An RNA of 177 nucleotides, treated with 2A3 and DMS and read out base by base. For 2A3 the reverse transcriptase was SuperScript II with manganese. The reactions ran in a buffer of 150 mM KOAc, 10 mM MgCl2 and 150 mM bicine (pH 8.5), at 24 C.
RNA sequence: GGGAACGACUCGAGUAGAGUCGAAAAAAAGCCUUGAACGCUGUCGUUUCGCCGUCGACAACAAUCACACGCGCACACUUCCACCAUUAUCAUCUAUCCACCACACAGGUUCGUCGGAUGCGAAACGCACUCACAAGUCUUUCGAGACUUGUGAGUGAAAAGAAACAACAACAACAAC
Reactivity to 2A3 in 0.01 (KOAc 150mM, MgCl2 10mM, bicine 150mM(pH8.5), 24C), signal-to-noise 2, nucleotides 027 to 126: a000a000a000g080c020c000u040u060g060a080a040c070g010c080u060g040u080c010g010u000u010u020c020g000c030c030g000u070c010g000a000c000a040a010c020a020a050u090c020a030c020a010c100g040c010g020c000a000c000a010c050u070u030c000c020a030c040c020a080u110u090a080u200c050a010u010c020u050a090u030c030c000a000c000c010a010c010a020c010a030g020g020u020u040c030g020u020c000g020g030a020u040g000c010g020a020a010a000c020g000
Reactivity to DMS in 0.01 (KOAc 150mM, MgCl2 10mM, bicine 150mM(pH8.5), 24C), signal-to-noise 3, nucleotides 027 to 126: a020a040a080g020c020c040u000u020g000a060a040c210g000c050u010g000u010c000g010u000u010u000c020g010c040c090g030u000c010g000a040c030a060a030c120a100a070u020c090a060c060a040c090g000c010g000c010a020c080a060c020u020u020c020c030a110c070c010a110u000u030a010u030c110a050u030c020u000a120u040c070c030a030c020c030a030c050a060c080a060g030g000u000u000c160g050u000c000g000g010a050u010g020c020g000a040a000a030c090g030